RNA sequence: GGGAACGACUCGAGUAGAGUCGAAAAGGCAGAUGUACUCGUCCAAAUCUGCCUCACAGCCUGGGUUUUUACCUUUUGCUCUUUUGAGCUGGUUGUGACGUACGUCGGACGGGUAUACGUACGUAAAGGGUGGCACGUAGUUCGCUACGUGUUACCCAAAAGAAACAACAACAACAAC
Reactivity to DMS in 0.01 (KOAc 150mM, MgCl2 10mM, bicine 150mM(pH8.5), 24C), signal-to-noise 8, nucleotides 027 to 126: g010g010c030a030g010a070u010g010u010a030c010u000c010g000u000c000c020a070a160a060u020c050u000g000c000c010u000c030a030c070a070g000c000c000u010g000g010g000u000u040u030u010u040a030c000c010u000u030u040u020g010c000u000c000u000u020u020u050g010a010g010c010u010g000g010u000u000g010u000g000a020c090g010u000a020c080g000u010c200g010g010a030c010g000g000g010u010a030u020a010c060g000u010a040c060g010u020a090a140a120
Reactivity to 2A3 in 0.01 (KOAc 150mM, MgCl2 10mM, bicine 150mM(pH8.5), 24C), signal-to-noise 9, nucleotides 027 to 126: g060g020c040a020g020a090u030g020u040a020c000u000c010g010u010c000c000a030a090a120u020c010u010g000c000c000u000c000a050c000a010g040c000c020u080g020g020g000u050u070u040u160u260a100c020c010u100u170u200u160g010c000u020c020u040u270u150u300g010a000g000c020u020g030g000u000u000g000u010g010a000c010g010u030a020c050g030u030c070g010g010a010c000g000g000g000u030a030u010a010c030g040u020a010c020g030u050a050a080a080
Structure probing data (DMS and 2A3) for a 177-nucleotide construct.